[RMDB]
RNA sequence: GGGAACGACUCGAGUAGAGUCGAAAAAGAAUUUUCUGCUUCUGGACACCUUAGGCUCAGAAGAUUGCUACUUGCGAUGCAAGCGGUGAGUUUUUUGAGGUUUUUUGUAAAUUCCACUUCGGUGGAGCCUUGUAAUAGUCUUCGGACUAUUACAAGGAAAAGAAACAACAACAACAAC
Reactivity to DMS in 0.01 (KOAc 150mM, MgCl2 10mM, bicine 150mM(pH8.5), 24C), signal-to-noise 3, nucleotides 027 to 126: a060g010a100a050u010u000u010u030c030u010g010c060u000u000c010u000g000g000a110c130a070c070c050u040u030a080g020g010c030u000c010a010g000a020a010g000a300u010u010g010c000u000a110c030u000u000g000c010g020a110u030g000c010a000a010g010c060g000g000u000g000a040g000u000u000u000u000u000u000g010a030g000g000u000u010u040u010u000u010g020u020a020a010a120u020u000c000c000a010c000u000u050c180g030g010u000g000g000a020g010
Reactivity to 2A3 in 0.01 (KOAc 150mM, MgCl2 10mM, bicine 150mM(pH8.5), 24C), signal-to-noise 5, nucleotides 027 to 126: a010g090a050a020u090u030u090u100c050u080g120c030u040u020c020u040g090g020a030c020a100c060c020u080u170a100g060g010c010u000c020a010g000a040a000g040a050u040u050g010c010u000a040c010u010u030g010c020g270a140u300g010c020a020a000g030c010g030g020u090g060a090g010u030u040u010u010u010u050g040a060g080g020u050u040u000u000u080u040g080u070a070a080a100u090u020c000c000a010c000u030u070c220g100g000u000g010g000a000g000